Structure probing data (2A3 and DMS) for a 207-nucleotide construct. The RNA was probed in 150 mM KOAc, 10 mM MgCl2 and 150 mM bicine (pH 8.5) at 24 C. The 2A3 profile rests on 4,212 reads. Reactivities are given for positions 27 through 156.
RNA sequence: GGGAACGACUCGAGUAGAGUCGAAAACAUAAGACCUCAGAGCUAAUGAGCCACAUACCUAGCCAAGGUGAAAGCUCCUUCUCUCGCAAUGUGUAACUCAUGAUUCUCAUGACCCCUGGUUGGAGAGCGCGCUAACACGCCUUCGGGCGUGUUAGAACAAUAAUCGUCUAUUCGUAGACGAUUAUUGAAAAGAAACAACAACAACAAC
Reactivity to 2A3 in 0.01 (KOAc 150mM, MgCl2 10mM, bicine 150mM(pH8.5), 24C), signal-to-noise 4, nucleotides 027 to 156: c020a030u140a050a060g060a060c010c050u060c060a040g000a010g050c030u090a120a030u060g020a010g020c020c010a050c010a030u150a050c020c030u040a020g020c040c020a080a050g020g000u040g050a090a090a040g040c030u060c000c040u070u020c030u000c010u020c050g000c050a060a100u060g010u020g040u100a070a030c010u020c050a020u030g040a140u240u040c050u020c030a080u100g040a090c000c020c000c010u010g050g000u030u010g000g030a060g000a000g040c050g000c010g000c040u010a010a000c010a000c000g010c000c000u050u070c190g060g000g000c000g000u000g000u000u000a000g000a000a000
Reactivity to DMS in 0.01 (KOAc 150mM, MgCl2 10mM, bicine 150mM(pH8.5), 24C), signal-to-noise 3, nucleotides 027 to 156: c080a150u000a070a090g020a080c020c030u000c030a120g020a100g020c070u000a110a120u000g000a090g040c050c000a110c070a090u000a050c040c000u000a100g020c100c070a080a080g020g000u010g000a090a070a110g010c040u010c030c030u000u000c030u000c010u010c040g000c050a120a080u000g010u000g020u000a030a060c040u000c020a070u000g000a130u000u010c050u010c040a090u000g000a140c020c000c010c030u000g020g010u000u000g020g010a080g010a080g040c050g010c010g000c010u000a010a010c010a010c000g000c000c010u000u000c300g030g020g010c000g030u000g000u000u000a010g010a050a120